An RNA of 177 nucleotides, treated with 2A3 and DMS and read out base by base. For 2A3, 3,820 sequencing reads were counted.
RNA sequence: GGGAACGACUCGAGUAGAGUCGAAAAUGACUGGCCGCAGUGUGUACUUCGCUGCGGAGCGUGCCCUGGGUUUCAUGGGCCUGCAUGAGAUGGCCCCGUCUCCGUCCACGGACAGCCACUACGUCGCCAAUCCCUUCCCAUUCGUGGGAAGGGAUUGAAAAGAAACAACAACAACAAC
Reactivity to 2A3 in 0.01 (KOAc 150mM, MgCl2 10mM, bicine 150mM(pH8.5), 24C), signal-to-noise 3, nucleotides 027 to 126: u170g050a030c050u050g090g050c010c010g000c010a010g020u030g000u030g040u180a170c110u120u080c020g000c010u000g000c000g000g000a000g010c010g040u060g030c000c010c010u070g110g000g000u040u090u160c090a100u120g020g000g030c030c020u050g020c040a100u120g080a040g030a160u070g040g010c000c000c000c050g060u010c010u000c010c020g060u030c010c020a030c020g030g000a060c020a010g030c020c010a020c050u080a050c050g060u050c020g050c050
Reactivity to DMS in 0.01 (KOAc 150mM, MgCl2 10mM, bicine 150mM(pH8.5), 24C), signal-to-noise 4, nucleotides 027 to 126: u000g000a110c040u010g010g000c000c000g010c000a030g020u010g010u000g030u020a110c240u010u000c030g020c010u010g000c010g010g010a050g000c060g020u000g010c020c010c020u010g020g020g000u010u010u000c040a090u000g020g010g010c010c030u000g000c080a090u000g010a070g000a080u000g010g000c030c030c020c130g000u000c020u000c040c080g000u000c030c080a070c070g020g000a070c100a110g000c030c030a090c080u000a070c100g010u000c060g000c170